Notes: The data come from the RNA Mapping Database (RMDB), library M2PK50. Structure probing data (DMS and 2A3) for a 177-nucleotide construct. Conditions: 150 mM KOAc, 10 mM MgCl2 and 150 mM bicine (pH 8.5), 24 C. 2A3 adducts were read by reverse transcription with SuperScript II with manganese.
RNA sequence: GGGAACGACUCGAGUAGAGUCGAAAAGCGGAGAUGUUCGCAUCUCCGCAAAUCCCUGGAUGCAGCGAGUUAAAACGGAUACGUUCGCAAGUAUCCAUCGCAAAAGUAUUAGCUUCGGCUAAUACAAGUGAUAUGCUUUGUUCGCAAAGCAUAUCACAAAAGAAACAACAACAACAAC
Reactivity to DMS in 0.01 (KOAc 150mM, MgCl2 10mM, bicine 150mM(pH8.5), 24C), signal-to-noise 2, nucleotides 027 to 126: g010c010g000g030a010g010a010u000g030u010u010c140g010c010a000u000c010u010c000c000g040c000a000a060a120u000c010c010c000u000g000g010a040u010g000c020a180g000c000g010a120g020u000u040a100a110a080a030c070g020g000a100u010a070c050g010u000u000c180g000c080a050a150g010u000a000u000c000c000a050u010c170g000c090a080a080a100a170g000u000a000u000u000a000g010c000u000u010c130g010g000c000u000a000a010u000a000c010a100a040
Reactivity to 2A3 in 0.01 (KOAc 150mM, MgCl2 10mM, bicine 150mM(pH8.5), 24C), signal-to-noise 2, nucleotides 027 to 126: g000c000g000g020a010g010a020u000g000u100u150c180g010c040a010u010c000u000c000c010g000c010a010a010a000u010c000c000c000u010g020g000a020u070g020c070a040g020c030g040a010g020u150u240a100a130a070a100c100g060g010a100u100a230c060g070u050u100c070g000c020a080a010g010u000a010u000c010c000a000u060c080g010c040a020a060a020a130g010u020a010u000u010a000g000c000u030u030c220g070g000c010u010a010a000u010a000c000a000a020